[RMDB]
RNA sequence: GGGAACGACUCGAGUAGAGUCGAAAAAAGAUAUGGAGCCACUACCCACCUCCAUAAAGAGUCAUCGAUCAGAGCUCGGAAACGAGCUCUGGGAGACUUACAAAGGAGAGGUGGCUCCUAAGUCAAAGUAUGAUCUUAAGUUCGCUUAAGAUCAUACAAAAGAAACAACAACAACAAC
Reactivity to 2A3 in 0.01 (KOAc 150mM, MgCl2 10mM, bicine 150mM(pH8.5), 24C), signal-to-noise 2, nucleotides 027 to 126: a030a000g130a070u210a140u160g000g000a000g000c010c030a040c040u230a300c050c000c000a030c020c000u010c020c000a020u230a010a100a030g040a000g040u060c070a180u300c300g110a100u040c010a000g000a010g010c010u010c000g020g020a060a120a040c010g000a000g000c140u000c020u020g000g000g000a040g000a000c000u030u010a040c100a080a140a060g000g000a030g000a010g030g010u010g000g010c000u010c000c020u010a020a000g040u060c070a030a060a090
Reactivity to DMS in 0.01 (KOAc 150mM, MgCl2 10mM, bicine 150mM(pH8.5), 24C), signal-to-noise 3, nucleotides 027 to 126: a080a150g000a120u000a180u000g000g020a040g020c030c020a020c030u000a130c030c020c030a300c090c000u000c010c000a020u010a080a180a260g000a020g000u000c040a180u000c200g020a160u010c000a000g000a000g000c000u000c010g000g000a050a090a100c000g010a000g010c000u000c010u000g000g000g000a080g010a010c010u000u000a080c170a130a190a140g000g000a020g000a080g050g000u000g020g010c000u000c000c000u010a040a070g020u010c120a100a090a160